RNA sequence: GGGAACGACUCGAGUAGAGUCGAAAAUGGUGAAGGCCAUGUUACUUAAAAAGGAGCCACUUCUCUAUGUGCCCAUCCGGCUGGCUGGACACACUAGACACCUCCCAGGUCCUCGUGUGUACCUGGUAUAUCCUCUACUUCGGUAGAGGAAAAAGAAACAACAACAACAAC
Reactivity to DMS in 0.01 (KOAc 150mM, MgCl2 10mM, bicine 150mM(pH8.5), 24C), signal-to-noise 9, nucleotides 027 to 129: u020g000g030u010g020a100a090g020g000c030c020a030u050g020u020u050a090c040u010u040a030a050a070a090a080g020g020a070g000c060c060a060c130u000u000c070u040c010u010a050u000g020u030g030c020c020c030a080u040c050c030g030g010c100u070g010g030c090u000g000g000a040c020a030c030a000c150u030a050g000a050c050a080c040c020u030c060c030c020a070g000g000u030c040c060u050c260g040u000g030u040g020u020a000c000c000u020g010g010u040a030u030a110
Reactivity to 2A3 in 0.01 (KOAc 150mM, MgCl2 10mM, bicine 150mM(pH8.5), 24C), signal-to-noise 9, nucleotides 027 to 129: u100g010g000u060g040a070a030g070g020c000c020a030u090g060u100u120a170c080u120u190a060a050a030a030a020g080g000a020g020c020c020a070c050u120u040c020u010c000u040a040u080g030u040g000c000c010c010a020u010c010c020g200g030c160u160g030g000c020u010g000g000a010c000a000c000a000c050u020a010g020a010c010a030c030c020u080c020c010c000a000g010g010u010c010c040u100c080g060u080g020u030g010u120a070c000c000u000g000g030u040a060u010a010